The record gives the reactivity of an RNA of 177 nucleotides to DMS and 2A3. Values are in units of 0.01, from 0 to 300, in steps of 10. High DMS reactivity at an A or C suggests that its Watson-Crick edge is free. The data come from the RNA Mapping Database (RMDB), library TTRDEL. For DMS the reverse transcriptase was MarathonRT.
[RMDB]
RNA sequence: GGGAACGACUCGAGUAGAGUCGAAAAGAUAUGGAGCGGCAGAGAGGUGGGAGUCCCUCGGAAACGAGAACCUCCCACUACCCACCUCUAUCGCUCCUAAGUCAAAACGGUACGUUCGCGUACCGAAGAGAGCUUAAAAGUUCGCUUUUAAGCUCUCAAAAGAAACAACAACAACAAC
Reactivity to DMS in 0.01 (KOAc 150mM, MgCl2 10mM, bicine 150mM(pH8.5), 24C), signal-to-noise 5, nucleotides 027 to 126: g010a050u000a300u000g010g000a020g020c010g010g000c090a010g000a030g010a080g020g020u000g000g010g020a030g000u000c200c150c010u000c010g000g000a060a070a170c010g000a010g010a090a190c220c010u000c010c000c000a030c020u000a010c040c040c100a300c100c010u000c010u000a020u000c000g010c010u000c000c000u000a010a040g000u000c050a100a080a120a100c010g000g000u000a000c010g010u000u010c200g000c010g010u000a010c010c000g010a040a060
Reactivity to 2A3 in 0.01 (KOAc 150mM, MgCl2 10mM, bicine 150mM(pH8.5), 24C), signal-to-noise 2, nucleotides 027 to 126: g030a000u070a030u170g000g010a000g000c020g040g000c010a000g010a000g000a020g060g030u020g020g020g020a000g050u220c090c010c000u010c000g010g040a090a050a020c000g010a000g020a070a070c010c030u020c010c020c000a000c010u010a020c010c030c020a060c000c000u000c000u010a020u040c010g000c010u000c000c000u010a060a010g020u000c020a010a020a100a120c010g000g000u000a000c000g010u010u060c130g010c000g130u000a010c000c000g000a010a000